[RMDB]
RNA sequence: GGGAACGACUCGAGUAGAGUCGAAAAGCAUCAGCGCCGCGCUGCACGAGGAAAGUUACCUCGACUCGCGCCCUGGCUACGGGCACGUGGUCAACAGCGACUUCGCCGGCUACCACAUCGCCGCCAACAACCUUCACAUCUUCGGAUGUGAAGGUUGAAAAGAAACAACAACAACAAC
Reactivity to 2A3 in 0.01 (KOAc 150mM, MgCl2 10mM, bicine 150mM(pH8.5), 24C), signal-to-noise 2, nucleotides 027 to 126: g020c020a090u170c040a000g050c050g000c080c020g000c020g030c060u030g000c120a050c130g000a010g030g080a300a090a050g190u190u160a160c000c000u020c020g030a030c020u010c010g040c000g000c000c020c000u110g100g060c060u110a080c080g020g000g000c030a010c100g070u070g010g020u040c060a030a020c000a090g030c030g070a130c060u080u040c080g000c000c020g000g030c030u070a060c010c000a000c000a050u110c030g060c030c000g020c010c000a030a050
Reactivity to DMS in 0.01 (KOAc 150mM, MgCl2 10mM, bicine 150mM(pH8.5), 24C), signal-to-noise 3, nucleotides 027 to 126: g000c090a090u010c030a060g040c010g010c120c110g020c050g010c080u000g020c040a110c090g030a000g020g000a090a130a130g030u010u000a080c020c010u020c110g020a190c040u000c020g010c040g000c040c050c000u000g020g010c090u010a030c130g000g000g030c080a060c030g000u010g000g000u020c040a050a110c180a110g020c050g000a140c110u000u000c010g010c010c040g000g020c020u000a150c080c050a040c060a120u010c060g020c020c040g020c030c100a120a130
This 177-nucleotide RNA was probed chemically with 2A3 and DMS. The RNA was probed in 150 mM KOAc, 10 mM MgCl2 and 150 mM bicine (pH 8.5) at 24 C. For DMS, 1,668 sequencing reads were counted.